[RMDB]
RNA sequence: GGGAACGACUCGAGUAGAGUCGAAAACGAGAGUGAUCCAGAUGACGGUCCUGCCAUGAGACCGCAACGAGAGCAUGUCGCAUCGAAUGGACUCGGGGAGUCGGCAGCUUGCCCCACGGAUGAGCGCAUAAGACAGCCCCGUUCGCGGGGCUGUCAACAUUGGAAACAAGUUCGCUUGUUUCCAAUGAAAAGAAACAACAACAACAAC
Reactivity to DMS in 0.01 (KOAc 150mM, MgCl2 10mM, bicine 150mM(pH8.5), 24C), signal-to-noise 3, nucleotides 027 to 156: c040g020a110g010a110g020u020g000a090u000c010c010a120g020a170u000g020a100c020g010g020u000c010c010u010g050c060c250a100u000g010a080g000a050c020c030g020c020a060a100c060g000a110g010a080g000c020a050u010g020u000c020g030c020a120u010c060g020a080a250u010g010g000a050c020u000c020g030g040g020g010a160g030u010c040g020g000c050a100g000c040u010u010g050c000c030c010c030a100c070g020g020a080u000g010a070g020c030g000c060a090u000a070a120g010a040c010a010g000c000c000c010c010g050u000u010c150g000c060g050g000g040g020c010u000g010u000c010a010a070
Reactivity to 2A3 in 0.01 (KOAc 150mM, MgCl2 10mM, bicine 150mM(pH8.5), 24C), signal-to-noise 2, nucleotides 027 to 156: c020g010a000g010a000g050u050g010a070u030c020c020a060g070a140u070g030a060c020g000g000u040c020c020u090g120c070c030a130u170g070a080g040a110c010c020g010c040a030a000c030g070a020g000a000g080c030a050u130g040u160c090g040c050a030u020c030g010a040a040u030g030g030a010c010u000c030g000g000g000g000a030g020u030c000g020g000c010a020g000c050u050u120g000c020c000c020c000a050c020g030g030a070u100g000a020g040c060g010c060a030u070a210a030g010a000c000a000g000c000c000c000c010g020u030u000c050g000c020g010g030g100g000c000u000g000u000c000a000a000
This 207-nucleotide RNA was probed chemically with DMS and 2A3. Source: RMDB library M2RFPK, as collected in RNAgym.